Structure probing data (DMS and 2A3) for a 177-nucleotide construct. It was measured as part of the RMDB library OK1LIB. The 2A3 profile rests on 2,140 reads. DMS adducts were read by reverse transcription with MarathonRT. For 2A3 the reverse transcriptase was SuperScript II with manganese.

RNA sequence: GGGAACGACUCGAGUAGAGUCGAAAAACAUUUUUGGCCUCUAUAUUAAUAUAUCAUUUUAGCUAGAGCGAAAUGCAAUCACAGAGACACAAAUGUUCUUUGCUUCAUGAGUGCCCUCUGAAAAGUAGCCUGCACUAAUAUUCGUAUUAGUGCAGGCAAAAGAAACAACAACAACAAC
Reactivity to DMS in 0.01 (KOAc 150mM, MgCl2 10mM, bicine 150mM(pH8.5), 24C), signal-to-noise 1, nucleotides 027 to 126: a030c000a010u010u000u000u010u020g010g020c060c000u000c010u000a010u010a040u000u000a080a020u030a170u030a170u000c070a040u000u000u000u000a000g030c080u090a020g000a150g000c020g000a000a020a000u000g000c130a120a020u010c220a170c140a050g000a070g010a300c010a020c130a020a160a040u000g000u010u000c000u020u000u000g000c090u000u010c000a010u000g000a190g010u000g000c030c070c000u000c080u000g000a000a010a120a090g000u040a120
Reactivity to 2A3 in 0.01 (KOAc 150mM, MgCl2 10mM, bicine 150mM(pH8.5), 24C), signal-to-noise 3, nucleotides 027 to 126: a000c030a030u010u040u020u020u070g100g000c080c000u000c010u010a060u030a050u180u190a240a090u140a060u030a080u270c020a050u010u040u040u060a050g000c030u020a040g020a010g120c010g030a000a040a020u040g010c080a020a070u110c030a040c030a080g000a010g000a000c010a000c020a000a000a050u010g010u030u010c030u060u100u080g040c040u010u070c020a070u130g010a000g010u020g000c000c050c000u030c020u050g100a120a010a020a040g080u080a020